[RMDB]
Structure probing data (2A3 and DMS) for a 207-nucleotide construct. For DMS, 1,949 sequencing reads were counted.

RNA sequence: GGGAACGACUCGAGUAGAGUCGAAAAAAUCCGCGUCGACUGAGUAUACACCUAUCGGAGACAACAAGGCUUUGAUAUCUAAAUAUGCAGGAAUUAAUAUCCUGAAUGUGUAUUCUCCUUCCACAUCCAUGAGAUUGAAUGCCAUUUACGGAUUCACUAAAGUACUGGAGUUCGCUCCAGUACUUUAAAAAGAAACAACAACAACAAC
Reactivity to 2A3 in 0.01 (KOAc 150mM, MgCl2 10mM, bicine 150mM(pH8.5), 24C), signal-to-noise 1, nucleotides 027 to 156: a000a000u050c000c000g000c050g060u030c050g050a110c050u000g000a010g040u030a030u010a030c020a000c010c040u020a030u050c010g060g000a020g010a030c050a060a000c070a130a030g090g000c000u000u020u050g060a030u020a020u120c070u200a080a140a070u100a080u240g050c010a000g000g070a040a000u210u090a240a090u170a110u110c000c010u030g070a020a000u050g030u010g010u010a080u050u050c000u010c000c000u040u100c010c010a060c010a050u110c070c000a080u150g060a010g000a170u050u170g010a040a010u130g080c000c010a040u050u060u150a050c070g030g000a000u060u040c000a030c080
Reactivity to DMS in 0.01 (KOAc 150mM, MgCl2 10mM, bicine 150mM(pH8.5), 24C), signal-to-noise 1, nucleotides 027 to 156: a050a030u010c000c020g010c030g020u000c110g000a150c070u010g010a090g020u010a050u000a090c040a100c030c090u000a060u000c020g040g010a110g040a100c040a120a170c120a120a200g040g000c050u000u000u000g030a060u000a040u020c020u010a040a070a110u000a040u010g010c010a110g010g020a040a130u000u010a130a130u000a110u000c010c020u010g000a020a030u000g000u050g020u000a020u000u000c040u000c020c050u010u000c000c060a060c020a040u000c040c010a050u000g000a140g010a110u010u030g000a040a060u010g020c020c030a100u010u000u010a040c030g000g000a070u010u010c060a090c190
Source information: The 2A3 profile rests on 530 reads.